Record summary:
This 177-nucleotide RNA was probed chemically with DMS and 2A3.
[RMDB]
RNA sequence: GGGAACGACUCGAGUAGAGUCGAAAAGCUACUUUCUUCGGAAAGUAGCAAAUAAGAAAUGAGCCAAUAAGGACGGAAAUAGGCUCAAAAUCCGCUCCUAAAAAAGCUCCAGGUUCGCCUGGAGCAACAACAUAAUUAACUUCGGUUAAUUAUGUUGAAAAGAAACAACAACAACAAC
Reactivity to DMS in 0.01 (KOAc 150mM, MgCl2 10mM, bicine 150mM(pH8.5), 24C), signal-to-noise 4, nucleotides 027 to 126: g000c000u000a000c000u000u000u000c000u000u010c220g020g000a020a010a000g000u000a000g010c000a010a020a030u000a090a100g010a040a070a300u000g010a020g000c000c010a110a090u000a130a140g000g010a090c150g000g000a080a140a110u000a110g000g000c000u000c000a040a030a150a130u000c020c040g000c160u000c010c010u000a000a070a110a070a100a090g010c010u010c010c000a000g010g010u000u000c230g010c000c010u000g000g000a000g020c000a010a020
Reactivity to 2A3 in 0.01 (KOAc 150mM, MgCl2 10mM, bicine 150mM(pH8.5), 24C), signal-to-noise 4, nucleotides 027 to 126: g000c000u000a000c000u030u010u010c010u020u040c090g080g000a010a010a000g000u000a000g000c000a010a000a000u050a000a000g040a000a060a060u090g020a010g010c000c020a010a050u130a150a050g130g030a040c070g010g040a010a080a120u130a110g040g000c010u010c030a040a040a010a060u000c010c020g040c110u040c000c020u100a110a090a040a030a020a020g010c000u010c010c000a000g010g020u050u060c160g060c040c010u000g000g010a000g020c000a000a000
For 2A3 the reverse transcriptase was SuperScript II with manganese. The reactions ran in a buffer of 150 mM KOAc, 10 mM MgCl2 and 150 mM bicine (pH 8.5), at 24 C. Source: RMDB library M2PK50, as collected in RNAgym.